[RMDB]
RNA sequence: GGGAACGACUCGAGUAGAGUCGAAAACGCACUCGCAGCUUAACAACCUGCGCUGAGCCCUUCUCCCCCAGCUUGCCUGUGUCCUAGGGAAUUGGAAGGUCAUCCUUCACAGGAUCGUGUGGAAGUCAUUACUCGUGAGUGUUCGCACUCACGAGAAGUCAACGAUAAUGUUCGCAUUAUCGUUGACAAAAGAAACAACAACAACAAC
Reactivity to DMS in 0.01 (KOAc 150mM, MgCl2 10mM, bicine 150mM(pH8.5), 24C), signal-to-noise 2, nucleotides 027 to 156: c070g010c060a110c050u000c020g010c030a050g000c040u010u010a150a140c240a100a090c200c010u020g000c000g040c090u020g010a120g050c040c010c030u000u010c090u010c040c020c000c030c030a120g020c040u000u010g000c000c040u000g000u010g000u000c050c040u000a070g010g010g010a070a130u010u000g010g010a100a040g040g030u000c040a110u000c020c020u000u000c100a070c100a080g030g000a060u010c070g000u000g030u010g000g000a090a230g010u000c030a100u000u000a160c000u000c000g040u000g010a020g070u000g040u000u010c300g030c030a050c000u010c020a010c000g000a000g000a020a100
Reactivity to 2A3 in 0.01 (KOAc 150mM, MgCl2 10mM, bicine 150mM(pH8.5), 24C), signal-to-noise 3, nucleotides 027 to 156: c060g000c000a040c020u020c000g000c000a000g000c010u010u020a020a000c000a000a000c010c000u010g020c000g020c190u030g020a040g020c010c020c010u150u050c120u100c020c000c000c000c000a000g030c030u040u110g050c030c000u050g010u010g010u080c040c060u060a050g000g000g090a070a060u090u080g070g020a050a040g030g020u070c040a090u080c000c000u040u040c010a020c000a020g000g010a060u030c060g030u040g000u040g090g020a010a060g040u060c020a080u060u190a080c010u000c000g010u000g000a000g000u000g030u010u070c110g030c120a000c000u010c000a000c000g000a000g000a000a020